[RMDB]
RNA sequence: GGGAACGACUCGAGUAGAGUCGAAAAGGCCGCGCGAUCGGCCGAGGUACGAUCGUACUAGUACGUACGGCGCACGAUCGUACCGUGAUCUGCGCGAGUACGUAGUCUAGGAUCCGUGGCGCGUACGGACUUAAGAACAUUUCGAUGUUCUUAAGUCAAAAGAAACAACAACAACAAC
Reactivity to 2A3 in 0.01 (KOAc 150mM, MgCl2 10mM, bicine 150mM(pH8.5), 24C), signal-to-noise 9, nucleotides 027 to 126: g070g000c020c000g000c020g000c040g060a070u060c010g030g040c040c010g010a110g000g040u080a090c010g010a050u050c020g010u020a040c020u020a030g040u020a020c030g010u010a010c020g040g000c010g010c010a020c150g000a000u010c020g030u090a170c030c010g020u120g010a020u000c020u040g000c000g000c000g020a040g010u010a020c010g000u010a030g070u000c020u020a020g030g060a070u040c040c030g020u040g040g000c080g000c010g070u020a030c050g060
Reactivity to DMS in 0.01 (KOAc 150mM, MgCl2 10mM, bicine 150mM(pH8.5), 24C), signal-to-noise 9, nucleotides 027 to 126: g010g010c020c010g020c030g020c140g010a070u000c010g010g010c050c050g010a030g020g010u000a030c010g000a040u000c030g010u000a140c030u000a060g010u000a040c040g010u000a010c010g010g010c020g010c020a020c180g010a010u000c000g010u010a090c250c230g000u010g000a020u000c010u000g010c010g010c000g010a130g030u000a010c010g010u000a030g010u010c020u000a050g000g000a110u010c070c030g010u000g000g010c040g010c090g010u010a070c120g010

Structure probing data (2A3 and DMS) for a 177-nucleotide construct. Conditions: 150 mM KOAc, 10 mM MgCl2 and 150 mM bicine (pH 8.5), 24 C. Source: RMDB library OK2TRN, as collected in RNAgym. For 2A3 the reverse transcriptase was SuperScript II with manganese.